[RMDB]
RNA sequence: GGGAACGACUCGAGUAGAGUCGAAAACGCUCGGCACUUCGGCUUCCUGACCGUUCCUCAGCCGAGGAACUUCAGCCGAGCAGCUUCGCCGUCAACUCCACCUGCCGCCUGACCUGAUGGCGGAUGCUAGCGAGUAACGAUUCGUCGUUACUCGCUAAAAAGAAACAACAACAACAAC
Reactivity to DMS in 0.01 (KOAc 150mM, MgCl2 10mM, bicine 150mM(pH8.5), 24C), signal-to-noise 2, nucleotides 027 to 126: c130g020c020u000c010g000g020c010a240c060u000u000c000g000g010c030u000u010c130c050u030g000a120c220c090g000u000u000c000c000u000c090a110g040c090c030g010a010g010g020a060a030c130u000u010c210a090g010c030c000g000a010g020c000a050g010c080u000u000c030g000c010c010g010u000c040a070a130c070u000c030c040a050c090c080u010g000c030c040g000c020c010u000g010a210c110c120u000g000a050u020g000g000c000g000g000a030u000g020c070
Reactivity to 2A3 in 0.01 (KOAc 150mM, MgCl2 10mM, bicine 150mM(pH8.5), 24C), signal-to-noise 1, nucleotides 027 to 126: c040g060c000u040c020g010g050c040a020c090u030u030c030g040g000c020u100u220c020c090u140g300a300c120c050g020u010u000c040c000u070c020a090g030c000c090g000a020g020g000a070a060c000u160u080c070a020g070c000c000g000a000g000c000a000g000c000u050u040c010g030c000c030g030u020c010a030a070c000u000c030c040a100c000c040u080g100c060c000g050c020c030u030g050a220c000c040u030g020a020u050g000g030c080g000g000a010u030g000c040